The record gives the reactivity of an RNA of 177 nucleotides to 2A3 and DMS. It was measured as part of the RMDB library TTRDEL. The 2A3 profile rests on 2,063 reads. Conditions: 150 mM KOAc, 10 mM MgCl2 and 150 mM bicine (pH 8.5), 24 C. Values cover nucleotides 27 to 126.
[RMDB]
RNA sequence: GGGAACGACUCGAGUAGAGUCGAAAAGAUAUGGAGAUUUCGUGGGAGACCUUUCGGAAACGAAGGGUCAUCGAUCACGAAUCUCCUAAGUCAAACUAUUCUGCCUGGUUCGCCAGGCAGAAUAGAACUCCUGUAGCUAGUUCGCUAGCUACAGGAGAAAAGAAACAACAACAACAAC
Reactivity to 2A3 in 0.01 (KOAc 150mM, MgCl2 10mM, bicine 150mM(pH8.5), 24C), signal-to-noise 1, nucleotides 027 to 126: g020a020u070a070u120g090g000a020g000a030u160u300u300c010g000u020g000g200g000a010g010a000c020c000u000u000u000c020g000g000a050a060a040c000g000a010a000g000g000g050u020c000a030u030c000g050a030u050c010a010c000g030a000a000u010c000u010c000c000u010a050a000g020u000c020a050a050a110c000u010a010u000u010c000u000g000c000c000u040g010g020u130u030c300g040c110c000a000g000g000c010a000g000a000a000u000a010g000a000a000
Reactivity to DMS in 0.01 (KOAc 150mM, MgCl2 10mM, bicine 150mM(pH8.5), 24C), signal-to-noise 1, nucleotides 027 to 126: g000a020u000a300u010g000g000a010g000a020u000u010u000c010g000u000g030g000g010a050g060a010c000c000u000u000u000c010g020g020a090a070a090c000g010a000a000g010g000g000u000c000a010u000c130g000a060u010c000a000c010g010a010a000u000c000u010c000c000u000a000a100g000u000c030a120a090a260c000u000a000u000u000c010u000g000c020c000u000g000g040u000u000c180g050c000c000a000g010g000c010a010g000a000a000u000a000g000a090a200